An RNA of 177 nucleotides, treated with 2A3 and DMS and read out base by base. Conditions: 150 mM KOAc, 10 mM MgCl2 and 150 mM bicine (pH 8.5), 24 C. The DMS profile rests on 858 reads.

[RMDB]
RNA sequence: GGGAACGACUCGAGUAGAGUCGAAAACUACAUAGUUUCGACUAUGUAGAAACCAUUAGCAAGCAUGCAGAUGCAUAUGGACGAGGGCAACUAACCUAUUGCGAACAGCAGGUUUCGACCUGCUGAACUCCUGUGUCUUGUUCGCAAGACACAGGAGAAAAGAAACAACAACAACAAC
Reactivity to 2A3 in 0.01 (KOAc 150mM, MgCl2 10mM, bicine 150mM(pH8.5), 24C), signal-to-noise 2, nucleotides 027 to 126: c000u020a000c010a010u000a000g020u040u010u060c210g030a030c010u000a000u000g020u000a000g060a020a010a000c010c000a030u060u080a000g040c010a040a030g020c030a020u130g030c030a030g050a180u130g000c020a030u060a060u140g060g010a030c030g070a090g000g030g040c020a090a020c020u050a010a050c000c030u070a110u030u180g060c050g050a070a020c010a000g000c000a000g010g070u030u040u080c150g060a020c010c000u000g010c010u010g000a010a000
Reactivity to DMS in 0.01 (KOAc 150mM, MgCl2 10mM, bicine 150mM(pH8.5), 24C), signal-to-noise 1, nucleotides 027 to 126: c020u000a010c000a020u000a000g000u000u000u020c140g020a020c000u010a010u000g000u000a010g000a040a040a160c010c000a090u000u000a070g010c100a100a050g000c090a020u000g000c060a020g020a060u010g000c020a070u000a070u000g000g010a110c070g020a110g040g020g000c010a070a070c010u000a060a130c060c080u010a110u010u050g010c070g000a100a230c010a010g000c000a000g040g000u010u000u050c240g000a020c020c000u000g000c000u000g000a060a110